[RMDB]
RNA sequence: GGGAACGACUCGAGUAGAGUCGAAAAUGCAACUCAUCGGCAGAUGUAAAAAUGCCAGUUAAAUAUAACUGCAAAAAAUACAAACACUUACGCAUUAGCAGCUUAAUAACCUGCCUGCGUGACCAGUCGCGAAUUGCUUGUGUUUGCUGAUUGGUCUGCGUAUACUUCCGUUCGCGGAAGUAUACGCAAAAGAAACAACAACAACAAC
Reactivity to 2A3 in 0.01 (KOAc 150mM, MgCl2 10mM, bicine 150mM(pH8.5), 24C), signal-to-noise 1, nucleotides 027 to 156: u120g000c010a020a060c040u020c000a010u020c010g000g040c010a000g030a010u040g020u300a000a010a000a000a000u000g010c000c010a010g000u000u040a140a300a210u170a110u070a160a020c010u010g000c030a040a030a170a000a030a030u260a010c100a020a120a000c020a040c070u100u100a000c000g000c020a020u110u050a000g000c000a000g000c020u060u050a030a000u010a040a040c000c000u010g020c010c010u010g000c010g000u020g000a000c000c010a010g010u000c000g000c000g000a000a000u120u150g120c110u100u080g090u070g010u190u000u040g010c070u090g010a000u000u000g010g000u000c000u040

An RNA of 207 nucleotides, treated with 2A3 and read out base by base. Source: RMDB library RSTRND, as collected in RNAgym. For 2A3 the reverse transcriptase was SuperScript II with manganese. Conditions: 150 mM KOAc, 10 mM MgCl2 and 150 mM bicine (pH 8.5), 24 C. The 2A3 profile rests on 527 reads.